[RMDB]
RNA sequence: GGGAACGACUCGAGUAGAGUCGAAAAUACCAGCAUUAAUAAAACAAUUAAGCACAACGUAGUUCCGAACCACGAGGAUCCGAGCUUUCUACGCAAGUCAGCUGCUGGAGUAGAUCUAGAUCUAGGAGCCGCUAAUAGCAUUCGUGCUAUUAGCGGCAAAAGAAACAACAACAACAAC
Reactivity to DMS in 0.01 (KOAc 150mM, MgCl2 10mM, bicine 150mM(pH8.5), 24C), signal-to-noise 1, nucleotides 027 to 126: u000a120c020c010a050g010c000a100u000u090a080a080u040a090a130a300a230c080a060a080u010u010a010a080g000c020a020c040a040a140c150g000u000a070g000u050u020c050c000g000a070a000c050c030a120c100g000a070g030g000a040u010c000c150g030a140g000c060u000u000u000c110u000a020c080g000c080a100a000g000u000c200a030g000c090u000g020c000u000g000g070a300g090u000a040g000a040u020c040u000a040g000a100u000c000u000a100g050g080a300
Reactivity to 2A3 in 0.01 (KOAc 150mM, MgCl2 10mM, bicine 150mM(pH8.5), 24C), signal-to-noise 2, nucleotides 027 to 126: u110a000c000c000a000g030c000a100u110u100a120a140u290a050a190a040a100c120a000a210u090u200a050a010g010c060a040c060a030a140c020g030u000a000g010u090u000c000c000g040a040a030c000c000a090c080g010a060g090g000a040u000c040c060g010a000g010c010u000u080u000c000u050a000c050g000c010a000a100g020u050c000a040g000c040u020g000c020u030g060g030a010g050u030a000g000a110u060c020u090a090g000a160u010c020u040a000g000g060a030
This 177-nucleotide RNA was probed chemically with DMS and 2A3. The RNA was probed in 150 mM KOAc, 10 mM MgCl2 and 150 mM bicine (pH 8.5) at 24 C. DMS adducts were read by reverse transcription with MarathonRT. The 2A3 profile rests on 831 reads. The DMS profile rests on 888 reads.